[RMDB]
RNA sequence: GGGAACGACUCGAGUAGAGUCGAAAAGGAAACAAGUUCAGAGAUUUUACCUACAGGUUUUGGACAAGGAGGUGCCAUGAGUAGGGAGGGCAGUCUUCUGUCCCUGGGUCAUGCAAGGCAGAAAUGACUUACUCAGUAGAUUCGUCUACUGAGUAAGAAAAGAAACAACAACAACAAC
Reactivity to 2A3 in 0.01 (KOAc 150mM, MgCl2 10mM, bicine 150mM(pH8.5), 24C), signal-to-noise 8, nucleotides 027 to 126: g070g020a060a080a010c070a090a050g030u100u090c050a020g030a020g010a150u030u060u100u260a070c010c010u050a060c030a060g080g040u030u100u190u170g040g010a010c020a070a040g050g020a020g030g040u060g030c020c010a050u080g020a020g090u120a050g030g030g050a060g040g020g000c020a020g020u040c030u130u020c010u060g070u110c000c000c020u050g020g000g030u040c010a010u090g020c040a040a040g040g000c010a020g070a040a080a040u080g010a010
Reactivity to DMS in 0.01 (KOAc 150mM, MgCl2 10mM, bicine 150mM(pH8.5), 24C), signal-to-noise 9, nucleotides 027 to 126: g010g010a100a080a090c090a070a090g020u000u000c060a060g010a130g000a100u000u000u010u000a100c030c020u000a080c100a070g010g010u010u000u000u000g010g000a050c060a080a080g010g010a070g010g020u000g010c040c020a060u000g010a100g010u000a060g000g000g010a110g010g000g000c050a030g010u010c100u000u000c030u000g000u000c010c010c030u000g010g000g010u000c060a050u000g000c080a060a070g000g010c040a050g010a060a070a080u000g000a200
Source: RMDB library OK2TRN, as collected in RNAgym. Chemical mapping of a 177-nucleotide RNA with 2A3 and DMS. DMS adducts were read by reverse transcription with MarathonRT.